An RNA of 177 nucleotides, treated with 2A3 and DMS and read out base by base.

RNA sequence: GGGAACGACUCGAGUAGAGUCGAAAAGAUAUGGAAAUCAGAUUUCAACAGCUUGUGACUCGGAAACGAGUCCAAGACAUGAAGCUGAUUUCCUAAGUCAAAAUCUUACAGGUUCGCCUGUAAGAAAGUAUUCUAGAACGUUCGCGUUCUAGAAUACAAAAGAAACAACAACAACAAC
Reactivity to 2A3 in 0.01 (KOAc 150mM, MgCl2 10mM, bicine 150mM(pH8.5), 24C), signal-to-noise 3, nucleotides 027 to 126: g000a020u030a020u060g000g020a000a000a030u020c010a030g300a300u020u050u010c190a300a210c090a180g030c000u090u000g110u300g090a000c000u000c010g010g000a010a020a010c000g000a000g030u000c000c010a000a000g010a000c110a260u300g000a010a000g000c000u000g000a010u000u010u030c000c000u020a010a000g000u000c000a060a000a060a300u010c000u000u010a020c010a020g030g080u030u130c230g120c060c000u000g000u020a000a010g000a000a000a020
Reactivity to DMS in 0.01 (KOAc 150mM, MgCl2 10mM, bicine 150mM(pH8.5), 24C), signal-to-noise 2, nucleotides 027 to 126: g020a010u000a010u010g000g000a010a000a000u010c010a020g000a110u000u000u000c000a150a090c200a170g000c000u010u000g010u040g010a000c000u000c000g000g000a010a000a020c000g000a020g000u010c000c010a000a000g020a020c060a160u010g000a000a000g020c010u010g000a010u000u000u000c000c000u000a000a090g000u010c000a140a110a150a150u000c000u000u000a000c000a000g000g010u000u030c300g010c000c020u000g000u000a000a000g000a030a030a140
The DMS profile rests on 2,613 reads.